[RMDB]
RNA sequence: GGGAACGACUCGAGUAGAGUCGAAAAUGGCUGCUUGGGUUCCUGGCAUGCUGAUUUGUGACUUAAGAUUAAAAUCACAUUGCCAGGGAUUACCACGCAACCUAGCCCCUUCAGUUCGCUGAAGGGGGGAAUAUGACAACUUCGGUUGUCAUAUUCCAAAAGAAACAACAACAACAAC
Reactivity to 2A3 in 0.01 (KOAc 150mM, MgCl2 10mM, bicine 150mM(pH8.5), 24C), signal-to-noise 5, nucleotides 027 to 126: u060g000g010c010u010g000c000u030u010g010g030g000u010u010c000c000u000g000g000c000a010u020g020c080u010g020a030u010u020u030g240u100g070a080c060u200u250a130a050g080a260u220u130a040a070a000a000u000c000a000c000a020u030u200g010c000c000a000g000g000g000a000u000u020a060c000c000a010c000g000c000a010a010c000c000u020a030g050c000c000c000c000u020u000c000a020g030u010u060c120g000c100u000g000a000a000g000g000g000g000
Reactivity to DMS in 0.01 (KOAc 150mM, MgCl2 10mM, bicine 150mM(pH8.5), 24C), signal-to-noise 3, nucleotides 027 to 126: u000g000g010c020u000g010c000u000u010g010g010g000u000u000c000c000u000g010g000c000a010u000g010c240u010g010a010u000u000u000g000u000g010a060c120u010u010a160a140g010a250u000u000a080a020a010a010u000c000a020c010a010u000u000g010c010c000a010g010g010g000a010u000u000a170c000c000a020c110g000c000a010a010c000c010u000a170g010c000c000c000c000u000u010c000a010g010u000u020c230g020c010u000g000a010a000g000g010g010g010
This 177-nucleotide RNA was probed chemically with 2A3 and DMS. For 2A3 the reverse transcriptase was SuperScript II with manganese. It was measured as part of the RMDB library RFMREP. The 2A3 profile rests on 9,054 reads. The reactions ran in a buffer of 150 mM KOAc, 10 mM MgCl2 and 150 mM bicine (pH 8.5), at 24 C.